[RMDB]
RNA sequence: GGGAACGACUCGAGUAGAGUCGAAAAAAAAACACAGGUCCGUGCGAAGUCGUAAGACGAUGUAUACGGACUGACGCCUGCCCGGUGCUGGAAGGUUAAGAGGACCGGUUAGCCAGUAAUGGCGAAGUUUUAAACAGACUUUCGAGUCUGUUUAAAAAAAAGAAACAACAACAACAAC
Reactivity to DMS in 0.01 (KOAc 150mM, MgCl2 10mM, bicine 150mM(pH8.5), 24C), signal-to-noise 7, nucleotides 027 to 126: a040a030a040a090a060c090a100c110a180g010g010u000c000c000g020u000g000c040g000a110a230g000u000c000g000u040a120a100g000a060c000g000a040u060g020u020a110u030a050c010g010g010a020c010u000g000a100c100g000c010c000u010g000c070c010c010g010g000u010g010c020u000g000g010a100a080g010g010u010u010a100a110g020a150g030g000a030c010c000g000g000u020u020a120g010c000c010a020g000u030a090a070u010g000g010c000g000a070a080g010